This 177-nucleotide RNA was probed chemically with DMS and 2A3. DMS adducts were read by reverse transcription with MarathonRT. Source: RMDB library M2PK50, as collected in RNAgym. 2A3 adducts were read by reverse transcription with SuperScript II with manganese.
[RMDB]
RNA sequence: GGGAACGACUCGAGUAGAGUCGAAAACACACAAGGUUCGCCUUGUGUGCAAGAAUAGACGAAUACUACCGUUGAAGUAUUCAGGUCACAUAACUACGGAAAUGGCGUUCUGCUUCGGCAGAACGAACUUGUUAUAGAUCUUCGGAUCUAUAACAAGAAAAGAAACAACAACAACAAC
Reactivity to DMS in 0.01 (KOAc 150mM, MgCl2 10mM, bicine 150mM(pH8.5), 24C), signal-to-noise 8, nucleotides 027 to 126: c000a010c010a010c000a010a000g000g020u000u020c240g020c000c000u000u000g010u000g010u000g000c060a070a070g010a130a080u000a080g000a060c050g000a020a010u000a010c000u000a080c080c130g010u000u010g010a150a050g000u000a010u000u000c010a070g010g010u010c040a100c170a060u010a080a060c130u010a080c080g010g000a130a070a080u010g010g000c010g010u000u000c000u000g010c000u000u000c170g030g010c000a010g000a000a000c000g000a010a070
Reactivity to 2A3 in 0.01 (KOAc 150mM, MgCl2 10mM, bicine 150mM(pH8.5), 24C), signal-to-noise 9, nucleotides 027 to 126: c000a000c000a000c000a000a000g040g010u050u080c150g140c030c000u000u000g000u000g000u000g000c010a030a030g080a060a090u140a130g040a020c030g010a010a010u010a010c020u040a110c010c080g110u070u140g080a060a000g000u010a010u010u020c040a030g140g070u050c030a040c030a170u210a190a080c080u140a040c100g090g080a080a080a120u170g160g010c010g000u010u010c000u000g010c000u020u050c110g090g000c000a000g000a000a000c000g000a000a000